RNA sequence: GGGAACGACUCGAGUAGAGUCGAAAACGCAACGAAAACCCACGAACCCUGUCAGGUCCGGAAGGAAGCAGCAGUAAGUGGCCCCUUUCGUGUGCCGUAGAGUCGCCUGGGCCGAGCUAACUGCUCAGGUAACGCCUAGGGUGGCAUGAUCGAAGGAUCAGUAUUAUGUCUUCGGACAUAAUACUGAAAAAGAAACAACAACAACAAC
Reactivity to 2A3 in 0.01 (KOAc 150mM, MgCl2 10mM, bicine 150mM(pH8.5), 24C), signal-to-noise 3, nucleotides 027 to 156: c030g010c050a030a030c050g090a040a030a020a050c010c020c010a010c010g030a020a060c070c010c010u030g060u100c010a020g020g020u000c010c010g110g110a110a080g030g010a020a000g000c020a000g000c000a010g000u070a090a050g010u020g010g000c000c000c010c000u000u020u010c040g000u060g060u040g010c040c010g090u040a020g000a010g070u050c030g000c000c000u000g000g000g000c010c050g040a040g030c100u100a100a150c050u100g000c000u020c010a020g020g020u030a060a020c040g030c010c020u070a060g080g000g030u070g090g000c010a030u060g010a050u090c070g070a110a040g120g030a060
Reactivity to DMS in 0.01 (KOAc 150mM, MgCl2 10mM, bicine 150mM(pH8.5), 24C), signal-to-noise 3, nucleotides 027 to 156: c030g030c050a070a160c040g000a080a040a090a180c070c020c000a110c010g020a080a080c050c020c000u020g020u010c100a120g060g010u000c000c010g000g040a170a140g000g010a070a130g030c040a130g010c040a080g010u010a070a300g020u000g010g000c020c030c030c030u000u000u000c000g030u000g010u010g010c010c030g000u000a060g000a100g010u000c090g010c030c000u000g000g020g010c000c070g000a180g010c080u000a060a120c070u000g020c000u000c010a050g020g000u010a020a100c110g010c040c010u000a050g010g030g010u000g030g020c010a060u000g000a070u010c050g020a130a110g020g020a250
Structure probing data (2A3 and DMS) for a 207-nucleotide construct. For DMS the reverse transcriptase was MarathonRT. Source: RMDB library ARCHII, as collected in RNAgym. For 2A3 the reverse transcriptase was SuperScript II with manganese.